[RMDB]
RNA sequence: GGGAACGACUCGAGUAGAGUCGAAAAAACGCGAGUGACCUACAUGCAGUAGUUGGCCCAUAUGCCCCCCAGGGACAAUCCCUAAGGAAUCCAAAUUAUAAUCAGAAAGUCACUUGCUGACCAGGGAUUAUAGGAAUAAGGGACCUGGGCAGAACUAAUAGCCCCAUUUAUUCGUAAAUGGGGCUAUAAAAGAAACAACAACAACAAC
Reactivity to DMS in 0.01 (KOAc 150mM, MgCl2 10mM, bicine 150mM(pH8.5), 24C), signal-to-noise 1, nucleotides 027 to 156: a040a000c100g010c060g030a170g000u010g020a070c000c050u010a190c090a080u010g000c120a150g030u010a110g010u010u000g020g050c000c000c040a120u010a120u020g010c030c000c010c010c090c010a080g000g050g020a100c070a080a120u000c030c030c000u000a060a030g000g000a050a070u010c020c020a140a080a110u020u020a040u000a020a080u000c050a080g010a210a300a030g030u000c000a000c040u000u000g030c070u030g060a070c030c080a150g010g010g000a020u000u000a060u000a080g000g000a140a090u000a090a100g000g070g010a060c010c040u010g000g000g010c010a120g030a060a060c030u000a160